[RMDB]
Description
Structure probing data (2A3 and DMS) for a 177-nucleotide construct. The reactions ran in a buffer of 150 mM KOAc, 10 mM MgCl2 and 150 mM bicine (pH 8.5), at 24 C.
RNA sequence: GGGAACGACUCGAGUAGAGUCGAAAAGCGGAGCAAGCCACUGGAAGCGAGUCUUGCAUGGGUCUUGGCGACAAGAUUUGUGAAGCGUAGACAGCGGGUACAAAAGCCGCGUUAUUGAGCCCCGAAAAGUACAUUUUCUAUUCGUAGAAAAUGUACUAAAAGAAACAACAACAACAAC
Reactivity to 2A3 in 0.01 (KOAc 150mM, MgCl2 10mM, bicine 150mM(pH8.5), 24C), signal-to-noise 9, nucleotides 027 to 126: g010c000g010g020a030g050c080a090a030g030c020c010a020c030u040g030g050a070a010g020c020g040a060g130u060c020u040u100g150c010a010u010g020g000g020u000c000u010u010g010g000c020g010a030c010a010a000g010a020u010u020u020g020u010g010a040a010g040c010g010u020a010g020a080c010a010g020c110g060g000g010u100a090c070a050a120a010a000g020c000c000g000c010g010u020u010a070u040u110g060a030g020c000c000c000c000g050a080a080a000
Reactivity to DMS in 0.01 (KOAc 150mM, MgCl2 10mM, bicine 150mM(pH8.5), 24C), signal-to-noise 9, nucleotides 027 to 126: g010c010g010g000a060g020c100a080a100g010c010c010a080c010u000g000g010a300a260g000c010g000a210g010u030c030u010u020g010c010a020u010g000g000g010u000c010u000u000g000g000c300g010a170c010a010a010g000a020u000u000u000g010u010g010a070a040g010c030g010u000a030g000a300c010a040g010c050g000g000g000u020a050c090a120a080a110a140g000c010c000g000c010g000u010u020a070u010u010g000a120g000c050c000c000c060g010a060a060a080